[RMDB]
RNA sequence: GGGAACGACUCGAGUAGAGUCGAAAAUCACACUAGUAGAGAGAUAGGAUCUCACAUCUAGCUAGGAUCUAGGUGCGUAUCGACAUGGUACAGGUACUGUACAUGCGGUACCUCGAUCACAUGUCGCGCCUUGAAGGCUUUUCGAAGCCUUCAAGGCAAAAGAAACAACAACAACAAC
Reactivity to DMS in 0.01 (KOAc 150mM, MgCl2 10mM, bicine 150mM(pH8.5), 24C), signal-to-noise 3, nucleotides 027 to 126: u010c030a110c210a090c040u000a050g010u010a060g000a110g010a040g020a060u000a050g000g030a300u030c020u010c010a100c020a130u000c010u010a030g000c110u010a150g010g010a010u000c080u010a070g000g070u000g010c080g000u010a050u000c050g020a030c000a010u000g010g000u000a120c300a000g050g000u000a010c000u010g050u010a180c300a060u020g000c030g000g000u000a000c000c020u000c030g000a130u000c020a050c030a000u000g030u000c020g000c270
The record gives the reactivity of an RNA of 177 nucleotides to DMS. Source: RMDB library OK2TRN, as collected in RNAgym. The reactions ran in a buffer of 150 mM KOAc, 10 mM MgCl2 and 150 mM bicine (pH 8.5), at 24 C. For DMS, 1,144 sequencing reads were counted.